[RMDB]
RNA sequence: GGGAACGACUCGAGUAGAGUCGAAAAAUAGGCUUAUCAAGAGAGGUGGAGGGACGGGCCCGAUGAAACCCGGCAGCCAGAAAUGGUGCCAAUUCCUGCAGCGGAAACGUUGAAAGAUGAGCCGAUGCCAGCAAUCCCUUCGGGGAUUGCAAAAGAAACAACAACAACAAC
Reactivity to 2A3 in 0.01 (KOAc 150mM, MgCl2 10mM, bicine 150mM(pH8.5), 24C), signal-to-noise 3, nucleotides 027 to 129: a000u090a010g000g000c010u000u000a000u060c070a140a000g090a030g010a040g050g020u020g020g040a020g000g000g040a040c060g140g000g090c000c020c000g050a120u050g030a010a020a020c000c000c000g000g020c020a060g200c010c000a000g020a000a100a000u010g070g000u030g000c010c000a030a020u030u010c000c000u070g010c000a020g020c000g020g000a040a000a000c020g000u020u060g060a100a070a070g010a010u000g000a010g000c000c010g020a060u210g040c030c030a000
Reactivity to DMS in 0.01 (KOAc 150mM, MgCl2 10mM, bicine 150mM(pH8.5), 24C), signal-to-noise 2, nucleotides 027 to 129: a160u080a060g000g020c030u020u060a030u020c060a100a050g000a080g030a200g030g020u230g100g020a060g010g220g030a000c040g150g010g020c080c040c000g060a120u060g010a020a100a050c020c070c000g030g060c030a000g090c010c030a120g010a040a110a030u010g020g020u030g000c010c010a060a100u070u000c020c030u060g020c090a010g020c080g040g060a140a070a110c050g040u000u000g010a000a000a000g010a020u020g000a260g030c020c000g020a070u000g030c050c000a160